RNA sequence: GGGAACGACUCGAGUAGAGUCGAAAAGAUAUGGACCAAGACAUGAUUUCGGGUCGGAAACGACCUUCGAUCAACAGCUUGUGUCCUAAGUCAAAUCGAUAAGGUCAGUUCGCUGACCUUAUCGAAAGGAGAAGAGUCAGUUCGCUGACUCUUCUCCAAAAGAAACAACAACAACAAC
Reactivity to DMS in 0.01 (KOAc 150mM, MgCl2 10mM, bicine 150mM(pH8.5), 24C), signal-to-noise 2, nucleotides 027 to 126: g000a030u010a300u010g000g030a000c020c000a000a000g030a060c130a210u000g000a010u000u000u000c280g000g000g020u000c000g020g020a090a110a140c000g000a000c010c000u000u000c130g000a020u010c000a000a110c300a140g010c000u000u000g000u020g000u010c000c000u000a010a050g000u020c060a080a100a200u000c010g010a000u000a010a000g000g000u020c000a000g000u010u010c180g010c000u000g010a010c000c000u000u000a000u000c000g000a000a050a120
Reactivity to 2A3 in 0.01 (KOAc 150mM, MgCl2 10mM, bicine 150mM(pH8.5), 24C), signal-to-noise 1, nucleotides 027 to 126: g040a020u070a020u170g020g000a000c000c020a010a000g050a060c110a160u180g000a030u000u050u050c060g000g000g000u000c020g000g000a080a050a010c010g000a010c000c000u000u010c010g000a010u030c010a020a030c070a070g060c000u040u040g070u120g030u160c000c000u010a150a000g060u020c050a000a020a270u000c010g010a000u000a000a010g000g030u000c000a000g000u060u180c170g010c180u030g010a000c000c000u020u010a000u000c000g010a020a000a010
Annotation
An RNA of 177 nucleotides, treated with DMS and 2A3 and read out base by base. For DMS, 1,162 sequencing reads were counted. The reactions ran in a buffer of 150 mM KOAc, 10 mM MgCl2 and 150 mM bicine (pH 8.5), at 24 C. The 2A3 profile rests on 2,512 reads. For 2A3 the reverse transcriptase was SuperScript II with manganese.